The record gives the reactivity of an RNA of 207 nucleotides to 2A3 and DMS.
The 2A3 profile rests on 1,476 reads.
For DMS the reverse transcriptase was MarathonRT.
The RNA was probed in 150 mM KOAc, 10 mM MgCl2 and 150 mM bicine (pH 8.5) at 24 C.
RNA sequence: GGGAACGACUCGAGUAGAGUCGAAAACAGGGGUUCACCUGGGCCAGAGCUACGCGCAACUGCGGCAUGCCCCCAUCUUCGCGCAGUGACGACGCGCACGUUCGCCGGGGCGUCUCGUCGCGCCGCUCCGAUCGCGCGUGCCAGGAUCCCGCGCAUGCGGGCUUACUGAAUUCGUUCAGUAAGCCCGAAAAGAAACAACAACAACAAC
Reactivity to 2A3 in 0.01 (KOAc 150mM, MgCl2 10mM, bicine 150mM(pH8.5), 24C), signal-to-noise 3, nucleotides 027 to 156: c050a040g000g030g030g040u200u140c070a050c100c010u000g030g000g000c030c050a100g010a060g080c140u220a010c030g000c000g030c050a100a090c090u100g000c020g040g020c050a060u250g010c010c000c020c000c010a070u070c060u140u160c100g020c000g000c000a050g000u010g090a010c030g000a020c040g010c010g020c020a040c010g040u060u090c060g090c250c040g030g000g050g000c000g040u000c040u010c040g150u070c030g000c010g010c030c010g020c010u070c020c070g070a110u140c090g000c000g010c010g000u010g040c000c000a010g000g000a030u020c000c010c000g000c050g000c000a030u180g020
Reactivity to DMS in 0.01 (KOAc 150mM, MgCl2 10mM, bicine 150mM(pH8.5), 24C), signal-to-noise 1, nucleotides 027 to 156: c040a070g000g010g010g030u000u010c080a070c010c020u000g040g040g020c080c030a140g000a240g030c030u020a030c060g020c010g020c030a140a090c100u000g020c030g000g050c020a170u010g080c020c000c040c000c060a110u000c060u000u010c040g000c060g050c040a120g030u010g000a140c050g030a020c000g010c010g030c010a030c030g000u000u010c100g010c120c010g000g000g100g070c030g020u000c080u010c100g020u000c050g020c030g000c000c010g040c010u020c020c050g020a070u010c050g000c010g040c000g010u020g000c030c020a130g000g000a110u000c010c000c030g000c050g020c050a200u020g020